RNA sequence: GGGAACGACUCGAGUAGAGUCGAAAACUGCUGGAAACGCCGCUCGCAAUGGCAAGGGCGCGCAAGUCGUCCAUCGACCUGCACGGCUAUCAGGUCGCCACCGUGCUGGCCCGGCUCGACGUGGCCGUACCCGGUCUGAAUUCGUUCAGACCGGGUAAAAAGAAACAACAACAACAAC
Reactivity to 2A3 in 0.01 (KOAc 150mM, MgCl2 10mM, bicine 150mM(pH8.5), 24C), signal-to-noise 2, nucleotides 027 to 126: c040u060g050c020u080g080g030a090a080a030c080g000c030c020g000c020u080c070g020c020a000a210u090g050g000c040a120a110g000g010g000c000g010c030g020c120a050a080g090u160c010g020u000c020c020a080u180c050g080a120c010c000u020g000c030a050c040g040g000c000u050a120u130c030a000g030g040u070c050g000c000c010a040c040c010g040u040g000c000u060g030g040c010c020c010g010g000c010u030c040g100a100c070g040u060g000g000c000c000g000
Reactivity to DMS in 0.01 (KOAc 150mM, MgCl2 10mM, bicine 150mM(pH8.5), 24C), signal-to-noise 2, nucleotides 027 to 126: c050u010g030c050u010g010g020a090a040a180c150g000c010c030g000c050u000c100g020c070a130a110u000g000g020c050a140a130g000g010g000c000g010c060g010c110a090a110g000u000c000g000u000c090c100a100u010c040g000a140c000c010u010g020c040a120c050g000g000c050u000a090u000c060a050g020g000u000c070g020c020c040a070c050c060g000u000g020c040u000g020g000c030c050c040g000g000c010u000c050g000a110c150g010u000g020g000c000c120g020
This 177-nucleotide RNA was probed chemically with 2A3 and DMS. For 2A3, 2,466 sequencing reads were counted. For 2A3 the reverse transcriptase was SuperScript II with manganese. The reactions ran in a buffer of 150 mM KOAc, 10 mM MgCl2 and 150 mM bicine (pH 8.5), at 24 C.